Notes
The record gives the reactivity of an RNA of 177 nucleotides to DMS and 2A3. The RNA was probed in 150 mM KOAc, 10 mM MgCl2 and 150 mM bicine (pH 8.5) at 24 C. Reactivities are given for positions 27 through 126.
RNA sequence: GGGAACGACUCGAGUAGAGUCGAAAAGUGAGAACGUUCGCGUUCUCACAAAUACUAAGACCGAAGCUUAGAUCGCCGACACUUCCCUUGGAAACGGCACAAAAAUGAUAGGUUUCGACCUAUCAAACUUAUACAUGUGUUUCGACACAUGUAUAAGAAAAGAAACAACAACAACAAC
Reactivity to DMS in 0.01 (KOAc 150mM, MgCl2 10mM, bicine 150mM(pH8.5), 24C), signal-to-noise 7, nucleotides 027 to 126: g010u000g000a010g000a010a010c000g020u000u020c210g030c010g020u000u000c000u000c000a000c000a030a080a060u010a090c040u000a020a030g010a100c080c110g010a090a110g000c010u000u000a020g010a170u000c140g010c000c010g010a110c120a100c130u000u000c000c000c010u010u000g010g000a090a100a110c020g000g010c010a150c260a030a050a040a060a080u010g010a010u000a000g010g000u000u000u010c200g000a020c000c000u000a000u000c000a010a040a130
Reactivity to 2A3 in 0.01 (KOAc 150mM, MgCl2 10mM, bicine 150mM(pH8.5), 24C), signal-to-noise 8, nucleotides 027 to 126: g000u000g000a010g000a000a000c010g010u050u080c190g010c010g110u000u000c020u000c000a000c010a000a000a000u090a010c010u020a010a010g030a030c020c150g160a090a010g040c010u020u010a010g010a070u120c110g010c010c000g030a030c020a020c100u030u020c010c000c000u010u030g040g020a060a110a040c020g010g050c050a010c030a040a080a030a020a040u090g000a000u000a000g020g040u010u060u100c190g080a040c000c000u000a000u000c000a010a000a000